[RMDB]
About this RNA
An RNA of 207 nucleotides, treated with 2A3 and read out base by base. Reactivities are rounded to 0.1 and cut off at 0 and 3. The 2A3 profile rests on 1,345 reads.
RNA sequence: GGGAACGACUCGAGUAGAGUCGAAAAGCAGGAAUGGCGUGAGGCUGGCUUCACAGAGCAGCGAUCACUGCCCGCUUCCAACGGUGGGAGGAUAACGGGCCGCUGCACUUCGAGCCCAACUCAGGCCCAGAGCCUCACUAAGCAGACCACCAUCUUUACAUGUAAGACAGUUCGCUGUCUUACAUGUAAAAGAAACAACAACAACAAC
Reactivity to 2A3 in 0.01 (KOAc 150mM, MgCl2 10mM, bicine 150mM(pH8.5), 24C), signal-to-noise 2, nucleotides 027 to 156: g040c060a010g070g200a140a060u220g140g000c010g020u020g000a010g000g020c020u030g000g020c000u070u050c090a060c030a060g030a010g000c000a000g060c010g050a100u170c120a050c250u150g020c000c000c000g000c000u020u000c040c000a080a030c130g120g000u030g020g010g000a020g010g000a030u060a120a050c030g000g010g010c000c010g000c000u000g010c010a020c050u030u050c000g040a020g010c000c000c040a070a110c020u050c050a020g140g000c010c020c000a040g000a010g020c010c000u000c000a020c020u010a100a000g090c050a000g100a060c030c020a020c000c000a010u000c000u000u000u000
Conditions: 150 mM KOAc, 10 mM MgCl2 and 150 mM bicine (pH 8.5), 24 C.
The data come from the RNA Mapping Database (RMDB), library ARCHII.